An RNA of 177 nucleotides, treated with DMS and 2A3 and read out base by base. Conditions: 150 mM KOAc, 10 mM MgCl2 and 150 mM bicine (pH 8.5), 24 C. Reactivities are given for positions 27 through 126. The DMS profile rests on 5,861 reads. The 2A3 profile rests on 3,392 reads.

[RMDB]
RNA sequence: GGGAACGACUCGAGUAGAGUCGAAAACACGGUUCCUGCGUAGAAUCGGCGAUCGCCUUCUGCGAUGCUGAUGAGCUCUUCGGCCGCAUCAGUCGGAGUACCGCAGAUGGCGGGGGUGGGAUGAGUGUCUGAGACAUACUUUCGAGUAUGUCUCAGAAAAAGAAACAACAACAACAAC
Reactivity to DMS in 0.01 (KOAc 150mM, MgCl2 10mM, bicine 150mM(pH8.5), 24C), signal-to-noise 5, nucleotides 027 to 126: c110a100c090g000g010u010u000c020c020u020g020c200g030u000a090g010a080a040u000c050g020g010c130g000a070u010c020g020c010c050u000u000c020u000g010c010g000a060u000g020c010u010g020a030u010g000a300g000c010u010c150u000u010c160g000g030c080c050g010c020a040u000c050a030g010u020c110g010g000a110g010u000a050c110c020g010c010a010g010a040u000g000g020c010g000g000g000g010g000u010g010g000g000a160u000g010a130g010u010g010
Reactivity to 2A3 in 0.01 (KOAc 150mM, MgCl2 10mM, bicine 150mM(pH8.5), 24C), signal-to-noise 3, nucleotides 027 to 126: c060a000c020g030g040u020u020c040c020u130g060c120g050u150a060g030a130a050u050c040g010g020c120g080a050u050c020g010c010c010u050u050c030u050g010c010g010a020u070g000c020u030g010a090u060g040a010g010c020u010c080u260u170c120g020g000c030c030g190c090a100u080c050a060g030u030c050g050g070a090g050u070a060c080c010g000c000a010g020a030u010g000g000c040g000g000g000g000g090u150g030g020g000a080u120g080a030g120u100g020